Notes
An RNA of 177 nucleotides, treated with 2A3 and DMS and read out base by base. The RNA was probed in 150 mM KOAc, 10 mM MgCl2 and 150 mM bicine (pH 8.5) at 24 C. For 2A3 the reverse transcriptase was SuperScript II with manganese. For DMS, 1,679 sequencing reads were counted. Source: RMDB library OK1LIB, as collected in RNAgym.

[RMDB]
RNA sequence: GGGAACGACUCGAGUAGAGUCGAAAACGGCAUAAUCCAGAUGUCGGCAUUAUGGCCAUUAUGCCGAUAUCGGCAUAACUUGCAUUGGGUCGGCGCAAGCCACCGGCUCAACCGCGACCUCAGCCGCCGGGAUUACUGCAUUCGUGCAGUAAUCCCGAAAAGAAACAACAACAACAAC
Reactivity to 2A3 in 0.01 (KOAc 150mM, MgCl2 10mM, bicine 150mM(pH8.5), 24C), signal-to-noise 4, nucleotides 027 to 126: c000g020g000c010a030u040a150a060u230c050c030a070g020a050u020g020u040c020g040g020c010a000u030u070a040u160g170g050c070c020a010u030u050a000u010g000c010c000g000a020u010a010u040c000g010g000c020a100u110a170a050c050u060u130g010c020a030u010u030g020g000g000u010c000g040g000c020g000c130a080a040g110c090c010a010c000c000g000g000c000u000c010a020a040c090c130g000c000g040a040c010c030u060c060a010g000c000c010g000c000
Reactivity to DMS in 0.01 (KOAc 150mM, MgCl2 10mM, bicine 150mM(pH8.5), 24C), signal-to-noise 2, nucleotides 027 to 126: c080g000g010c000a100u040a100a090u050c080c100a120g010a030u010g000u030c000g000g060c040a050u000u010a000u010g020g000c230c190a140u000u000a030u000g010c000c040g000a050u020a040u000c040g000g000c260a040u010a080a180c180u010u040g050c010a300u010u000g000g000g000u000c020g000g000c030g000c080a100a090g000c070c020a230c030c000g010g000c030u030c000a060a020c210c160g000c000g000a060c080c000u040c170a040g010c000c000g110c190